This 177-nucleotide RNA was probed chemically with DMS. The reactions ran in a buffer of 150 mM KOAc, 10 mM MgCl2 and 150 mM bicine (pH 8.5), at 24 C.
RNA sequence: GGGAACGACUCGAGUAGAGUCGAAAAGAUAUGGAACAUCAGUGGGAGCGAGCUCUCGGAAACGAGAGUCUCGCCACGAUGUUCCUAAGUCAAAAGUCGAAUGCUUCGCUUCGGCGAAGCAUUCGACCUUUUACGUGCUCUUCGGAGCACGUAAAAGAAAAGAAACAACAACAACAAC
Reactivity to DMS in 0.01 (KOAc 150mM, MgCl2 10mM, bicine 150mM(pH8.5), 24C), signal-to-noise 1, nucleotides 027 to 126: g010a040u000a300u010g000g000a010a000c000a010u000c000a190g060u010g000g010g050a210g040c120g000a010g030c000u000c000u000c000g000g000a060a050a210c010g010a010g000a000g000u000c020u000c000g020c000c000a020c010g020a000u000g000u000u000c000c000u000a010a090g000u010c050a140a140a090a110g000u000c000g000a050a010u000g000c000u000u000c000g080c030u000u000c300g040g020c020g000a000a020g060c010a000u000u000c000g000a020c000